[RMDB]
RNA sequence: GGGAACGACUCGAGUAGAGUCGAAAAGAUAUGGAUCCACAGGACAUGCUUGGUUCGGAAACGAGAGAGAGCAACAGCCUGGGAUCCUAAGUCAAAACUCGGAUACAAGUUCGCUUGUAUCCGAGAACACUAACGUCUGGUUCGCCAGACGUUAGUGAAAAGAAACAACAACAACAAC
Reactivity to DMS in 0.01 (KOAc 150mM, MgCl2 10mM, bicine 150mM(pH8.5), 24C), signal-to-noise 3, nucleotides 027 to 126: g000a010u000a190u000g010g000a010u000c000c000a110c020a030g000g000a030c110a190u020g000c010u000u010g020g000u010u000c000g030g000a060a060a080c000g000a010g000a140g020a170g010a030g000c000a080a090c140a110g000c000c010u000g010g030g020a010u000c000c000u000a000a040g010u010c030a090a130a110a180c000u000c000g010g000a020u000a010c000a000a010g010u010u030c300g010c020u000u000g010u000a000u000c000c000g000a000g000a030a120
Reactivity to 2A3 in 0.01 (KOAc 150mM, MgCl2 10mM, bicine 150mM(pH8.5), 24C), signal-to-noise 3, nucleotides 027 to 126: g010a000u040a040u080g000g000a010u050c000c030a300c010a300g000g000a040c110a290u260g010c010u060u070g050g120u280u040c000g020g000a040a030a010c020g000a010g000a010g000a000g000a000g000c070a090a210c080a270g030c000c010u020g010g000g020a010u000c000c010u000a010a000g010u000c010a010a040a110a150c010u000c000g000g000a000u000a000c000a020a020g040u050u120c220g130c160u000u000g010u010a010u000c000c000g000a000g010a000a000
Structure probing data (DMS and 2A3) for a 177-nucleotide construct. Conditions: 150 mM KOAc, 10 mM MgCl2 and 150 mM bicine (pH 8.5), 24 C. For DMS the reverse transcriptase was MarathonRT. 2A3 adducts were read by reverse transcription with SuperScript II with manganese. It was measured as part of the RMDB library TTRDEL.